[RMDB]
RNA sequence: GGGAACGACUCGAGUAGAGUCGAAAACAGAGCUGAUGGGCCAUGUACCUAUCCAAAAUGAGAUCCCAUCUUGCACACUGUGCUAAUUUGGGAUUCUCAUGCCUCCUACUUGGAGAGAUCUGGACUACUAACUGUAUGACGUUCGCGUCAUACAGAAUCGUGCAGUAGAGUUCGCUCUACUGCACGAAAAAGAAACAACAACAACAAC
Reactivity to 2A3 in 0.01 (KOAc 150mM, MgCl2 10mM, bicine 150mM(pH8.5), 24C), signal-to-noise 3, nucleotides 027 to 156: c010a010g010a010g010c060u070g010a010u030g010g040g000c040c050a140u160g060u140a060c010c020u030a020u030c040c020a090a030a010a070u010g000a000g000a000u000c000c000c000a000u000c010u000u010g000c000a020c050a050c130u300g010u000g010c070u220a040a060u030u000u020g050g000g000a020u280u060c000u000c020a000u010g000c000c000u010c000c010u150a290c070u180u240g000g000a010g000a000g010a020u040c030u040g010g040a030c060u080a040c030u060a300a030c000u030g010u000a000u000g000a000c020g000u020u030c180g000c020g100u010c000a000u030a000c000a000g010a000a030
Reactivity to DMS in 0.01 (KOAc 150mM, MgCl2 10mM, bicine 150mM(pH8.5), 24C), signal-to-noise 1, nucleotides 027 to 156: c030a040g050a020g020c050u000g050a010u010g000g040g010c020c070a240u010g020u010a000c010c010u000a020u030c030c040a120a150a150a060u000g030a060g020a080u000c020c030c000a030u000c080u010u010g000c000a010c030a280c110u000g020u010g000c000u030a050a040u000u000u010g010g040g010a000u000u010c000u010c030a000u000g000c000c030u000c010c020u010a130c250u010u000g010g080a060g000a090g010a040u000c010u030g000g000a090c090u000a140c300u000a050a200c000u000g000u000a030u010g000a030c020g040u000u010c300g020c000g000u000c000a010u000a000c010a040g000a000a030